[RMDB]
The data come from the RNA Mapping Database (RMDB), library OK2TRN.
The record gives the reactivity of an RNA of 177 nucleotides to 2A3 and DMS.
DMS adducts were read by reverse transcription with MarathonRT.

RNA sequence: GGGAACGACUCGAGUAGAGUCGAAAAGUCUAGCGAUUUAGGGAUCCGAUCCGGGUCGCAGAACUCAACUGCAUGAGUAGACACGCAAGUCGCGUAUUGGCCGACCGUCCAAGGAUCUGCUAGACGACGCAGUAUGCUAGUUCGCUAGCAUACUGCGAAAAGAAACAACAACAACAAC
Reactivity to 2A3 in 0.01 (KOAc 150mM, MgCl2 10mM, bicine 150mM(pH8.5), 24C), signal-to-noise 2, nucleotides 027 to 126: g000u000c000u010a000g020c010g050a070u050u080u220a180g010g060g070a030u030c050c020g000a050u050c080c060g130g010g030u010c000g000c030a000g000a060a030c020u020c030a070a100c090u210g020c060a110u060g010a000g020u040a040g050a060c040a010c050g020c060a150a120g150u190c060g010c010g010u030a090u120u170g080g010c080c020g000a000c010c010g000u000c030c000a050a040g000g000a000u000c030u050g000c010u000a010g010a010c000g010a010
Reactivity to DMS in 0.01 (KOAc 150mM, MgCl2 10mM, bicine 150mM(pH8.5), 24C), signal-to-noise 2, nucleotides 027 to 126: g020u000c010u000a000g010c050g010a090u000u010u010a190g030g010g000a030u000c090c010g020a110u010c140c090g020g040g020u010c020g020c060a090g000a090a070c070u010c060a020a100c090u000g020c130a100u000g000a060g030u000a090g010a040c060a040c010g030c020a080a070g000u010c150g020c040g000u000a110u010u010g020g040c130c000g010a030c010c020g000u000c030c000a050a200g000g000a000u000c010u010g020c000u000a000g010a000c000g020a160